[RMDB]
RNA sequence: GGGAACGACUCGAGUAGAGUCGAAAAAAUGCAUCAAACCAACAAAGUGCGUCAGAUUUAAGUGAUGAGGAACUUCGCGGAAUGGUUGCGAGUAUGCAAAUGCAGGUGGCACAAGUAAACGUAUUAACUAGCUGUUAAAGUUCGCUUUAACAGCUAGAAAAGAAACAACAACAACAAC
Reactivity to DMS in 0.01 (KOAc 150mM, MgCl2 10mM, bicine 150mM(pH8.5), 24C), signal-to-noise 6, nucleotides 027 to 126: a070a050u000g000c040a050u000c060a080a090a200c070c040a050a160c190a060a080a040g010u000g010c070g010u000c030a030g010a120u000u000u010a060a090g020u000g010a080u000g000a070g000g010a040a030c060u000u000c060g010c190g010g000a090a080u000g010g000u000u010g020c080g000a060g010u000a030u000g010c070a030a040a050u000g000c040a020g010g000u000g010g000c050a050c130a050a050g000u000a030a040a050c100g010u010a080u000u000a070a180
Reactivity to 2A3 in 0.01 (KOAc 150mM, MgCl2 10mM, bicine 150mM(pH8.5), 24C), signal-to-noise 2, nucleotides 027 to 126: a010a010u150g000c000a030u000c050a030a000a120c050c000a020a010c040a050a190a030g070u060g020c030g070u060c050a040g060a110u010u130u250a170a050g080u080g090a080u020g020a030g110g020a040a020c000u040u010c020g030c070g040g080a110a050u070g070g030u020u040g000c050g000a010g020u070a040u110g010c000a060a000a060u070g010c010a010g150g030u050g010g000c000a020c010a030a060g070u120a050a070a030c070g030u060a070u100u030a060a090
Description
Chemical mapping of a 177-nucleotide RNA with DMS and 2A3. Values cover nucleotides 27 to 126. For 2A3, 2,231 sequencing reads were counted.